[RMDB]
Source: RMDB library M2PK90, as collected in RNAgym.
This 177-nucleotide RNA was probed chemically with 2A3 and DMS.
Reactivities are given for positions 27 through 126.
RNA sequence: GGGAACGACUCGAGUAGAGUCGAAAAGUAAAGGCGGAGGAGGCUUUUGGCUUGCGCUCGGUCCGCCCGCGCGUGGUGUGGGCUGGAAUUCGUGUGUGGAGGAUGAUUAAUGCCGCGCGCCCAGGAAUAUAGGUGCUUUAUUCGUAAAGCACCUAUAAAAAGAAACAACAACAACAAC
Reactivity to 2A3 in 0.01 (KOAc 150mM, MgCl2 10mM, bicine 150mM(pH8.5), 24C), signal-to-noise 2, nucleotides 027 to 126: g030u020a120a090a000g050g030c050g000g070a040g000g070a020g020g030c000u140u000u090u050g150g030c070u070u060g030c140g010c010u000c040g090g130u000c030c030g000c020c000c000g010c010g010c000g070u140g040g030u100g010u070g010g060g000c070u050g080g130a040a040u170u120c000g030u130g020u030g030u060g220g080a030g000g000a060u010g000a020u080u180a100a040u140g000c000c000g030c000g000c020g000c040c050c000a000g070g050a080a010
Reactivity to DMS in 0.01 (KOAc 150mM, MgCl2 10mM, bicine 150mM(pH8.5), 24C), signal-to-noise 3, nucleotides 027 to 126: g000u010a060a070a110g000g010c010g020g010a100g010g010a080g010g020c030u000u000u020u000g010g010c100u000u000g000c040g000c040u000c020g010g000u000c010c040g010c010c000c030g020c020g020c030g020u000g020g010u000g010u000g010g010g020c040u000g010g000a140a100u000u010c040g010u000g010u010g040u000g000g010a080g020g010a110u000g010a100u010u000a080a060u000g010c000c020g010c060g000c030g000c010c030c040a120g000g000a090a140